[RMDB]
RNA sequence: GGGAACGACUCGAGUAGAGUCGAAAAACUCCAUGGUACGCCAUGGAGAUCUUCCGAGGAGCGUUGCAACCGCCACUUUAGCUUGGCGGCCAGGCUCGGAACCGUGACAACGGCGCUCACCCGCAAAUAUCCCAUAUGUAUUCGUACAUAUGGGAUAAAAAGAAACAACAACAACAAC
Reactivity to DMS in 0.01 (KOAc 150mM, MgCl2 10mM, bicine 150mM(pH8.5), 24C), signal-to-noise 9, nucleotides 027 to 126: a060c010u000c000c000a010u000g000g020u000a090c250g030c010c000a000u010g000g000a000g000a010u010c050u010u000c000c010g010a050g000g010a040g010c020g000u010u000g010c060a160a220c010c000g000c000c000a020c100u020u030u030a100g020c240u020u000g010g010c000g010g010c060c010a100g000g000c010u000c010g010g000a030a120c020c020g000u000g010a100c280a080a040c020g000g000c020g000c010u000c030a180c030c020c010g010c200a070a070a140
Reactivity to 2A3 in 0.01 (KOAc 150mM, MgCl2 10mM, bicine 150mM(pH8.5), 24C), signal-to-noise 9, nucleotides 027 to 126: a000c000u000c000c000a000u000g000g010u060a060c270g050c050c000a000u000g000g000a010g000a000u020c060u070u020c010c000g000a020g010g010a020g010c030g020u040u030g000c010a020a020c000c000g020c030c000a020c010u260u230u140a070g050c090u060u050g000g000c000g000g000c000c000a010g010g010c000u000c000g000g010a020a030c010c010g050u050g060a050c050a080a000c020g010g000c000g000c000u010c010a040c010c040c030g070c090a040a090a040
This 177-nucleotide RNA was probed chemically with DMS and 2A3. Source: RMDB libraries RFM100 and RFMREP, as collected in RNAgym. For DMS the reverse transcriptase was MarathonRT. Reactivities are given for positions 27 through 126.